[RMDB]
RNA sequence: GGGAACGACUCGAGUAGAGUCGAAAACGUCCCCGUCGUACAGAAUGGUAACAUAUCUCUCGAAAUAUCUGAGCUUGGGUAUACGGGGAAACCCAACCCCUUGGGAAGAUUGGGUAUAUGGCUAAAUUACAUCGAUUGUACUUCGGUACAAUCGAAACCAGUACUGACACUUCGGUGUCAGUACUGGAAAAGAAACAACAACAACAAC
Reactivity to 2A3 in 0.01 (KOAc 150mM, MgCl2 10mM, bicine 150mM(pH8.5), 24C), signal-to-noise 2, nucleotides 027 to 156: c010g110u050c050c000c010c000g120u080c080g020u050a030c070a110g090a100a130u220g070g030u170a160a070c040a010u130a140u020c020u000c000u000c070g130a180a300a190u210a080u030c060u060g000a010g040c000u080u090g050g000g000u000a040u000a060c020g010g000g020g000a000a020a040c000c000c020a010a030c000c000c000c010u060u080g030g000g010a080a000g010a050u050u080g010g000g070u040a020u000a000u110g060g000c080u190a240a070a070u140u090a110c050a150u000c000g000a000u010u000g000u000a010c000u010u100c260g040g000u000a000c000a000a000u000c010g000a000a000a000

This 207-nucleotide RNA was probed chemically with 2A3. Values are in units of 0.01, from 0 to 300, in steps of 10. The RNA was probed in 150 mM KOAc, 10 mM MgCl2 and 150 mM bicine (pH 8.5) at 24 C. Reactivities are given for positions 27 through 156. For 2A3, 556 sequencing reads were counted. Source: RMDB library M2RFPK, as collected in RNAgym.